RNA sequence: GGGAACGACUCGAGUAGAGUCGAAAAUUCGGUGCAUUCAUCGCUGGAUCGAAUACCGUGAGCGACAUUCUAUUUGGAUUAUUCCAAUUCCAAGCCGCACAGGAUGUUGGAGCACCAACAGUAAUCGUGGUCGCUGCACAAGCUGUCGGAGGUGCAAGUUAGCUAAGGAGUUCGCUCCUUAGCUAACAAAAGAAACAACAACAACAAC
Reactivity to 2A3 in 0.01 (KOAc 150mM, MgCl2 10mM, bicine 150mM(pH8.5), 24C), signal-to-noise 5, nucleotides 027 to 156: u060u020c010g030g000u020g050c030a050u030u140c030a050u060c100g070c180u110g090g050a050u040c070g050a030a030u060a110c040c030g010u050g060a020g040c020g030a030c030a060u110u030c070u160a140u090u060u050g040g000a050u070u080a090u290u100c040c030a040a040u080u000c010c010a080a040g080c050c030g070c030a040c040a060g100g000a070u080g050u090u070g040g030a020g010c000a020c030c000a020a050c010a030g120u260a170a150u180c110g030u050g030g020u070c080g010c130u110g000c010a010c010a030a050g050c010u010g030u040c030g060g030a070g030g010u040g030c020a050a070
Reactivity to DMS in 0.01 (KOAc 150mM, MgCl2 10mM, bicine 150mM(pH8.5), 24C), signal-to-noise 2, nucleotides 027 to 156: u000u000c030g000g000u010g070c080a120u000u000c050a090u010c060g050c080u020g010g010a030u000c070g010a100a070u010a070c030c030g010u000g010a140g050c040g000a070c030a060u000u000c030u010a070u000u000u010g030g010a090u000u020a160u000u010c000c010a050a080u010u000c040c020a040a130g040c020c040g010c060a150c090a070g020g020a140u000g010u010u000g010g040a160g000c030a100c020c020a090a040c030a060g010u020a070a100u000c110g060u010g030g030u000c100g010c080u000g000c010a040c050a060a160g040c000u000g020u000c030g000g010a080g010g000u010g000c060a020a210